An RNA of 307 nucleotides, treated with 2A3 and DMS and read out base by base.
It was measured as part of the RMDB library POS240.
Conditions: 150 mM KOAc, 10 mM MgCl2 and 150 mM bicine (pH 8.5), 24 C.
Reactivities are given for positions 27 through 266.
The DMS profile rests on 297,185 reads.
RNA sequence: GGGAACGACUCGAGUAGAGUCGAAAAGAGUCUGUAUCGUAUAGAUAGUAUACGAUCUACUACGGGUGGUACGCAAUGGGUACUACCCGUGAGUGCAGCACUGUGGUGCAUUAGGUGCACAGUGCUCCCGUCCUCAAUCUAUGAGAUGCGAUAGAUUCGCGACGGGUGGGACAUACCACCUAAUGCACGUAUGUCUCAGCACUCACGGGAACUCGCCAUUGCCGAGUUUCCGUAGUAGAACGGUACCUAUCGUACCGUUGCAGACUGGAGUACAGUUCGCUGUAUUCAAAAGAAACAACAACAACAAC
Reactivity to 2A3 in 0.01 (KOAc 150mM, MgCl2 10mM, bicine 150mM(pH8.5), 24C), signal-to-noise 9, nucleotides 027 to 266: g090a000g000u000c000u000g000u000a000u000c000g010u000a000u010a020g140a100u160a130g030u010a020u000a010c000g000a010u000c000u000a000c000u000a000c000g000g000g010u030g010g010u020a010c020g030c070a170a250u200g010g000g000u010a010c010u020a020c010c000c000g000u000g000a000g000u000g000c010a010g010c020a010c030u050g040u090g190g030u010g020c030a090u070u160a100g010g010u010g010c050a030c050a060g010u020g050c010u000c000c000c000g000u010c000c010u090c040a040a050u020c010u040a050u070g110a160g090a300u260g160c070g030a000u020a030g040a020u060u050c070g030c080g040a010c010g000g000g010u120g030g020g010a010c000a010u120a030c000c020a010c010c010u090a100a040u200g000c000a000c000g000u030a020u070g020u000c010u010c050a010g000c000a000c000u000c000a000c000g000g000g000a000a000c000u000c010g030c000c020a220u160u220g000c010c010g000a010g010u000u020u000c000c000g000u000a000g000u000a000g000a000a000c000g000g000u000a000c010c030u140a220u280c050g000u000a000c000c010g000u000u000g000c000a000g000a000c000u000g010
Reactivity to DMS in 0.01 (KOAc 150mM, MgCl2 10mM, bicine 150mM(pH8.5), 24C), signal-to-noise 9, nucleotides 027 to 266: g000a030g010u000c010u000g010u000a010u000c000g010u000a000u000a030g010a170u020a110g010u000a010u000a000c000g010a010u000c010u000a000c000u000a010c000g000g000g020u000g000g010u000a030c070g010c010a110a050u020g000g000g000u000a020c030u000a020c000c000c000g010u000g000a010g010u000g010c010a060g010c240a020c030u000g010u010g010g010u000g000c000a080u010u000a030g010g020u000g010c040a060c150a060g010u000g000c010u000c000c000c000g000u000c010c030u010c300a030a020u000c020u000a010u000g010a170g010a120u010g010c130g010a020u000a020g000a030u000u000c230g040c300g010a010c010g000g000g020u010g000g000g000a020c010a030u010a120c300c010a010c010c000u000a050a030u010g000c010a010c010g000u000a010u000g000u000c030u000c110a090g010c010a010c010u000c010a000c000g000g000g000a010a030c030u000c020g010c010c010a130u010u010g020c000c000g000a030g010u000u000u000c000c000g010u000a000g010u000a010g000a010a000c000g000g000u000a000c010c090u010a140u000c080g000u000a000c000c000g010u000u000g000c010a010g000a010c000u000g000